RNA sequence: GGGAACGACUCGAGUAGAGUCGAAAAGAAAAGAGCGUAAUCGCGUCUUGACGUGAGUGAGUCUAGACUGUAGUCUAUCCCAAGUGGGAUAGAAUAUCUCACAAUACGCUGAUCUACAGUCAAAAGACAGCUAGGAUCGAUUCGUCGAUCCUAGCUGAAAAGAAACAACAACAACAAC
Reactivity to 2A3 in 0.01 (KOAc 150mM, MgCl2 10mM, bicine 150mM(pH8.5), 24C), signal-to-noise 3, nucleotides 027 to 126: g240a020a060a010a010g010a000g000c000g010u010a030a010u070c010g000c000g020u010c120u110u220g080a010c030g000u000g010a030g020u010g000a000g020u000c050u050a050g020a010c000u000g000u000a000g000u000c020u020a020u010c000c010c030a030a110g300u300g010g000g000a000u000a000g000a020a000u060a030u030c010u000c000a010c010a000a030u040a020c000g000c010u020g020a040u000c000u000a000c010a000g010u000c020a090a060a000a000g110a020
Reactivity to DMS in 0.01 (KOAc 150mM, MgCl2 10mM, bicine 150mM(pH8.5), 24C), signal-to-noise 1, nucleotides 027 to 126: g000a020a060a060a070g010a000g000c090g030u020a080a300u030c000g010c000g000u000c020u020u050g000a070c000g000u010g000a000g010u000g000a020g010u000c140u000a030g010a000c000u000g000u000a000g060u000c000u070a010u000c000c000c000a180a160g000u000g030g000g010a000u000a000g000a040a120u000a070u000c000u000c000a000c000a180a190u000a020c000g000c000u000g000a100u050c010u020a010c000a000g000u000c020a050a010a090a100g000a080
This 177-nucleotide RNA was probed chemically with 2A3 and DMS. For 2A3, 2,294 sequencing reads were counted. The RNA was probed in 150 mM KOAc, 10 mM MgCl2 and 150 mM bicine (pH 8.5) at 24 C. Source: RMDB library OK1LIB, as collected in RNAgym.